RNA sequence: GGGAACGACUCGAGUAGAGUCGAAAACUGAUUCGUGGAGCUGUUGGCUCAGGAAAGUCUACUGGACUCCCAUUUUAUCUGAGUAGAAAAGGGAGAGUUUUGUUAGUGGAACCCACCAGACCAUUAGACGCUGGUACUAUUUCGAUAGUACCAGCGUAAAAGAAACAACAACAACAAC
Reactivity to DMS in 0.01 (KOAc 150mM, MgCl2 10mM, bicine 150mM(pH8.5), 24C), signal-to-noise 1, nucleotides 027 to 126: c070u000g010a120u010u000c090g020u020g000g010a030g020c020u000g020u000u000g020g020c040u000c020a050g000g000a080a140a130g000u000c020u000a050c040u010g000g000a150c030u010c020c000c000a090u020u000u000u000a060u010c050u020g000a080g000u000a070g010a010a030a040a050g010g000g000a080g000a110g000u000u010u010u010g020u020u000a090g030u000g010g010a060a170c090c000c010a100c040c020a110g000a120c020c050a060u000u000a090g020

Structure probing data (DMS) for a 177-nucleotide construct.
Source: RMDB library OK2TRN, as collected in RNAgym.
For DMS, 1,030 sequencing reads were counted.
DMS adducts were read by reverse transcription with MarathonRT.